[RMDB]
RNA sequence: GGGAACGACUCGAGUAGAGUCGAAAAGGACUGGACCAGGACCACAGGUACCGCCGGACCCAUAUAAGGUACCAACCAGAAUAAGACAGAUACAUAAUGGGCAGCACAAUGUAGCCAGUCAGAAUCGCGUGCCUAGUCUACGGCACGAGCGAGCUAAAUUAAUGAUAAAUUUCGAUUUAUCAUUAAUAAAAGAAACAACAACAACAAC
Reactivity to 2A3 in 0.01 (KOAc 150mM, MgCl2 10mM, bicine 150mM(pH8.5), 24C), signal-to-noise 5, nucleotides 027 to 156: g050g010a020c050u080g010g030a030c030c060a060g010g060a030c010c020a050c080a090g030g000u020a050c000c020g000c000c020g060g050a090c000c010c000a020u070a020u020a090a030g010g000u020a040c000c020a020a070c030c030a050g080a140a080u160a160a010g070a070c050a020g090a060u100a150c040a030u180a130a030u170g010g030g000c010a020g030c010a020c020a090a060u110g010u050a040g030c020c020a000g020u020c010a000g110a050a070u040c020g000c000g020u000g000c010c000u030a060g030u040c060u060a050c080g000g000c010a000c010g000a010g000c030g010a000g010c010u040a110a180
Reactivity to DMS in 0.01 (KOAc 150mM, MgCl2 10mM, bicine 150mM(pH8.5), 24C), signal-to-noise 5, nucleotides 027 to 156: g030g000a110c030u000g010g020a170c050c070a130g040g010a180c020c040a070c070a100g010g030u000a020c010c010g010c040c040g010g020a140c020c010c020a090u010a110u010a080a070g020g020u000a060c010c020a080a160c060c030a160g000a110a120u010a080a110g010a160c060a100g010a120u000a040c060a080u000a080a090u010g010g010g010c020a080g010c060a060c060a060a070u010g030u010a080g000c020c010a060g010u000c040a080g000a070a090u010c040g010c000g040u010g010c010c010u000a220g010u000c100u010a120c150g010g000c000a020c010g000a030g020c040g020a100g010c040u000a060a070